[RMDB]
This 177-nucleotide RNA was probed chemically with 2A3 and DMS. 2A3 adducts were read by reverse transcription with SuperScript II with manganese. The 2A3 profile rests on 5,623 reads.

RNA sequence: GGGAACGACUCGAGUAGAGUCGAAAAGAUAUGGACCAUUCGAGCGUGUGGUCGGAAACGACCAGACGCGAUGAGACGGUGGUCCUAAGUCAAAAGGCGUACACCUGGUUCGCCAGGUGUACGCCAACCUGAAUUAUGGGUUCGCCCAUAAUUCAGGAAAAGAAACAACAACAACAAC
Reactivity to 2A3 in 0.01 (KOAc 150mM, MgCl2 10mM, bicine 150mM(pH8.5), 24C), signal-to-noise 3, nucleotides 027 to 126: g030a010u090a020u180g000g010a010c020c020a040u250u250c150g040a060g080c010g010u210g020u020g240g000u010c030g030g030a090a060a000c000g000a000c000c000a000g030a020c000g000c020g000a030u080g040a060g060a030c100g020g000u020g000g000u000c000c000u000a130a020g060u020c030a000a020a070a200g000g000c000g000u000a000c000a000c010c000u010g050g080u080u160c300g070c120c000a020g000g000u000g000u020a000c000g000c000c000a000a000
Reactivity to DMS in 0.01 (KOAc 150mM, MgCl2 10mM, bicine 150mM(pH8.5), 24C), signal-to-noise 3, nucleotides 027 to 126: g000a030u010a300u000g000g000a010c010c000a040u000u020c030g030a170g020c000g050u010g010u000g000g000u000c000g000g000a070a060a190c000g010a000c000c010a010g000a020c000g010c010g000a020u000g010a130g000a240c300g010g030u000g000g000u000c000c010u000a010a050g010u000c040a080a070a140a080g000g000c000g000u000a000c000a000c000c000u000g020g010u000u020c210g000c000c000a000g000g000u000g000u000a000c000g010c010c000a000a000

Conditions: 150 mM KOAc, 10 mM MgCl2 and 150 mM bicine (pH 8.5), 24 C. It was measured as part of the RMDB library TTRDEL.